RNA sequence: GGGAACGACUCGAGUAGAGUCGAAAAUAGAAUCUUCGCUUCACUCAUAUUAGCUCGUAAACAUGGCACUUGUUGUACUACAAGGGACAGAUUUUAUCGCUUGGCAAAUGAGUGUGCUCAGGUGCUAGUUAGUACAGAUGUUCGCAUCUGUACUAACAAAAGAAACAACAACAACAAC
Reactivity to 2A3 in 0.01 (KOAc 150mM, MgCl2 10mM, bicine 150mM(pH8.5), 24C), signal-to-noise 5, nucleotides 027 to 126: u070a000g050a020a010u010c010u020u020c030g000c010u150u150c010a000c010u010c020a020u070a130u120u130a050g000c010u010c050g020u030a020a030a020c040a090u030g010g000c020a010c030u010u030g020u040u040g090u150a070c060u010a010c030a010a000g020g020g030a010c010a030g110a070u070u080u030u060a090u150c040g000c110u050u060g040g000c020a020a020a100u050g000a020g020u020g010u010g010c000u000c020a010g000g020u020g020c000u020a050
Reactivity to DMS in 0.01 (KOAc 150mM, MgCl2 10mM, bicine 150mM(pH8.5), 24C), signal-to-noise 5, nucleotides 027 to 126: u010a060g010a070a110u000c020u000u010c190g010c000u010u000c030a030c000u000c020a030u000a130u010u000a130g010c020u010c060g010u000a010a020a040c300a160u000g000g000c000a040c010u000u010g010u000u000g010u000a050c160u000a030c020a010a020g000g000g010a020c040a040g000a140u000u000u000u000a030u010c070g040c300u000u000g000g020c060a060a070a030u000g000a030g010u010g010u000g010c000u000c170a020g010g010u000g000c020u000a050